RNA sequence: GGGAACGACUCGAGUAGAGUCGAAAACAUUCUGUUUCGACAGAAUGAAAAAACCUUUGUGUGUACAUCAGCAACAGCCUCCACGGCUGCCCAUUGGGCAGUUGGAGGACAUGCUGUUGUACACACUCUGGUAAAAACGUCGACUUCGGUCGACGAACGAAUGAUGUCUGUUCGCAGACAUCAUUCGAAAAGAAACAACAACAACAAC
Reactivity to 2A3 in 0.01 (KOAc 150mM, MgCl2 10mM, bicine 150mM(pH8.5), 24C), signal-to-noise 5, nucleotides 027 to 156: c000a000u000u000c000u000g030u050u110u110c140g090a010c000a000g020a010a000u040g050a170a030a020a020a000a000c010c000u000u010u000g000u010g000u000g000u010a000c000a010u000c000a000g010c000a010a080c020a200g080c000c000u020c010c010a060c140g160g000c010u000g000c010c000c020a300u230u300g000g000g010c000a010g010u070u040g010g000a000g000g020a020c000a010u010g000c000u000g010u000u010g000u010a000c000a000c000a000c000u000c000u000g000g000u100a090a070a030a020a010c010g000u000c000g000a000c000u040u060c280g090g000u010c010g000a000c000g000a050a010
Reactivity to DMS in 0.01 (KOAc 150mM, MgCl2 10mM, bicine 150mM(pH8.5), 24C), signal-to-noise 1, nucleotides 027 to 156: c010a010u000u000c000u000g020u000u000u010c190g020a110c000a030g000a020a020u010g000a010a070a050a090a130a060c010c020u010u000u000g020u000g040u000g000u020a010c000a020u000c000a040g000c000a050a100c060a250g020c000c000u000c020c000a150c200g050g020c000u020g010c000c010c000a300u010u000g040g040g000c000a020g000u000u010g020g000a200g010g010a000c000a110u010g010c010u000g000u010u000g060u000a010c000a000c000a000c000u000c030u000g000g010u010a060a030a050a100a060c030g000u000c000g010a020c010u000u010c300g060g010u010c000g000a000c010g000a040a100
The record gives the reactivity of an RNA of 207 nucleotides to 2A3 and DMS. The data come from the RNA Mapping Database (RMDB), library RNAMAK. The RNA was probed in 150 mM KOAc, 10 mM MgCl2 and 150 mM bicine (pH 8.5) at 24 C. Reactivities are given for positions 27 through 156. DMS adducts were read by reverse transcription with MarathonRT.